[RMDB]
RNA sequence: GGGAACGACUCGAGUAGAGUCGAAAAGGGGUCGCAUCACACGGAGGUUAGCGAGGUACCACUGAAGCCUCCACGGUGGUACUACCCACCGCUAACUACCCACCCGUGAAUGAUGCGACGGAGGCACCCAAAAUGAGCGGACUUCGGUCCGCUCAAAGGAUUACUAUGUGUUCGCACAUAGUAAUCCAAAAGAAACAACAACAACAAC
Reactivity to DMS in 0.01 (KOAc 150mM, MgCl2 10mM, bicine 150mM(pH8.5), 24C), signal-to-noise 1, nucleotides 027 to 156: g000g060g000g010u000c010g040c010a040u000c000a050c020a070c030g010g000a240g000g010u020u010a020g100c000g000a160g000g010u000a080c040c000a130c000u000g030a040a200g010c010c010u010c000c100a300c080g040g090u010g000g030u000a200c000u010a020c020c000c040a300c010c030g000c000u000a000a070c000u000a030c030c000c040a300c140c010c000g010u010g010a070a000u000g000a080u000g000c000g000a040c000g080g000a070g110g000c070a030c000c000c000a010a090a160a130u000g000a010g020c040g140g000a070c000u000u000c300g030g020u000c000c010g050c000u000c000a000a000a200
Reactivity to 2A3 in 0.01 (KOAc 150mM, MgCl2 10mM, bicine 150mM(pH8.5), 24C), signal-to-noise 2, nucleotides 027 to 156: g070g020g020g010u010c000g000c000a000u000c000a000c010a000c010g000g000a000g000g000u010u000a000g010c000g000a000g000g010u000a000c000c000a010c000u030g030a170a000g000c010c000u000c000c000a000c000g000g000u010g000g010u030a010c000u030a020c020c080c020a020c010c000g000c020u000a010a000c000u030a020c070c080c040a040c010c000c000g000u000g020a100a130u020g000a000u000g010c000g000a000c010g000g010a000g010g000c010a030c000c000c000a010a080a010a160u140g000a000g020c000g000g010a010c020u070u080c300g110g000u000c000c000g000c000u000c000a000a010a000
Source: RMDB library RNAMAK, as collected in RNAgym.
This 207-nucleotide RNA was probed chemically with DMS and 2A3.
For 2A3 the reverse transcriptase was SuperScript II with manganese.
The DMS profile rests on 1,481 reads.
The RNA was probed in 150 mM KOAc, 10 mM MgCl2 and 150 mM bicine (pH 8.5) at 24 C.